RNA sequence: GGGAACGACUCGAGUAGAGUCGAAAAAGGUGAUUUCUCCUGCACCUUUAUCAAUGGAGGAACUCGACUUUGCUGUGGGUCCCAAAGGGACCUUAGGUGCAGACAGUUACCGGCGGUCAAGUGUGAGCAUAGGUUCGUGUCUUCGGACACGAACCAAUCAAUGAUAUAGCUUCGGCUAUAUCAUUGAAAAAGAAACAACAACAACAAC
Reactivity to 2A3 in 0.01 (KOAc 150mM, MgCl2 10mM, bicine 150mM(pH8.5), 24C), signal-to-noise 4, nucleotides 027 to 156: a000g020g010u010g010a030u030u040u050c020u010c010c010u140g060c020a030c010c020u100u210u110a070u030c070a040a050u260g020g000a010g000g010a030a030c020u010c030g020a020c020u030u090u100g000c020u020g010u110g050g000g000u030c000c000c020a090a120a090g000g000g000a010c010c010u010u090a030g000g000u010g000c010a030g070a270c030a020g040u050u080a010c000c020g020g000c020g030g000u020c020a020a030g020u050g050u070g100a030g030c090a140u120a180g000g010u000u000c000g000u000g000u000c000u020u050c190g070g000a000c000a000c000g000a000a000c000c000a000a000
Reactivity to DMS in 0.01 (KOAc 150mM, MgCl2 10mM, bicine 150mM(pH8.5), 24C), signal-to-noise 3, nucleotides 027 to 156: a060g020g040u000g010a300u000u000u000c020u000c050c010u000g000c030a080c030c000u000u000u000a110u020c150a080a120u000g000g010a150g010g000a080a060c040u000c020g030a090c010u000u000u000g040c050u000g020u000g030g010g010u000c010c010c000a100a140a220g040g030g010a030c020c030u000u000a020g040g020u010g000c060a110g010a100c150a080g020u000u010a070c060c020g010g010c100g000g000u000c070a060a130g000u000g010u000g020a130g000c060a120u000a090g040g000u000u000c000g010u000g020u000c010u000u000c300g050g010a040c000a000c000g000a000a000c000c000a010a020